[RMDB]
RNA sequence: GGGAACGACUCGAGUAGAGUCGAAAAUUGACAGUCACCCCGUAAGGUUCACAAACCACCCCAUUGAACAGAUGAGGAACUGAGGCUCAAGGAGGUUAAGUAACAUUUCCAGGGUUAUAUAAACUAGUAAAUGGCAGAGCUAAGAGUCAAAUCCAGGCAGGAGUUGUAUUUUCGAAUACAACUCCUGAAAAGAAACAACAACAACAAC
Reactivity to DMS in 0.01 (KOAc 150mM, MgCl2 10mM, bicine 150mM(pH8.5), 24C), signal-to-noise 3, nucleotides 027 to 156: u000u000g010a090c020a060g050u010c030a150c030c020c020c030g040u000a050a090g000g030u000u000c040a070c070a100a090a060c010c040a130c010c010c010c010a110u010u000g000a080a100c090a150g010a070u000g000a110g020g020a110a080c050u020g010a110g020g040c040u000c030a050a170g020g010a070g050g030u000u000a020a120g000u000a060a060c040a080u000u000u000c040c030a090g000g010g020u000u010a070u000a060u000a090a060a070c020u000a100g010u000a030a040a050u000g020g010c030a050g000a120g030c040u000a060a040g000a090g020u000c020a010a090a110u000c050c020a100g030g000
Reactivity to 2A3 in 0.01 (KOAc 150mM, MgCl2 10mM, bicine 150mM(pH8.5), 24C), signal-to-noise 2, nucleotides 027 to 156: u030u030g030a020c020a020g050u040c020a070c020c010c000c000g030u060a120a080g020g010u110u090c060a050c040a070a110a020c050c010a050c020c010c020c010a040u020u080g020a090a050c040a080g030a070u050g010a090g050g010a040a020c020u050g030a020g050g000c010u010c070a040a030g020g020a010g000g050u070u030a040a010g020u030a060a030c020a050u050u060u060c020c010a010g030g000g030u040u020a020u010a030u040a100a090a000c020u020a010g040u080a040a080a090u050g020g000c020a000g000a010g040c010u010a050a020g020a000g020u020c000a020a020a020u030c060c000a000g060g000